RNA sequence: GGGAACGACUCGAGUAGAGUCGAAAAAUCUCGUUAGAGGUCAGUCCUUCCGGCUCAAGGAAGAUCUGAUGCUGGUUACGAUCGGCAAAACGCAUCACCUUGUCUUCGAUCGAAGGACAGUAGCGUGCGAGCAUGCAGGUUUCGACCUGCAUGCUCGAAAAGAAACAACAACAACAAC
Reactivity to DMS in 0.01 (KOAc 150mM, MgCl2 10mM, bicine 150mM(pH8.5), 24C), signal-to-noise 1, nucleotides 027 to 126: a100u000c000u000c000g000u000u000a040g000a200g020g010u000c060a070g000u000c000c000u000u000c000c050g000g000c250u030c130a060a040g020g000a220a180g000a000u040c000u050g000a190u000g000c000u000g000g000u000u000a100c300g020a020u000c040g060g030c040a000a030a270a190c110g020c220a000u010c000a200c050c070u000u000g000u040c110u030u020c000g010a220u030c050g010a050a000g000g100a010c040a220g010u000a050g000c040g050u010g000
Reactivity to 2A3 in 0.01 (KOAc 150mM, MgCl2 10mM, bicine 150mM(pH8.5), 24C), signal-to-noise 2, nucleotides 027 to 126: a000u040c070u000c020g080u000u040a150g000a030g030g160u030c040a000g010u050c000c000u000u020c000c000g040g000c020u000c030a030a030g050g000a060a040g000a000u000c040u050g040a070u040g050c030u040g000g010u060u060a080c190g000a120u080c000g130g000c000a000a100a000a000c000g040c200a020u040c010a040c000c000u020u040g020u090c010u120u140c060g110a160u100c050g020a080a000g010g030a050c090a030g030u020a040g010c110g030u090g060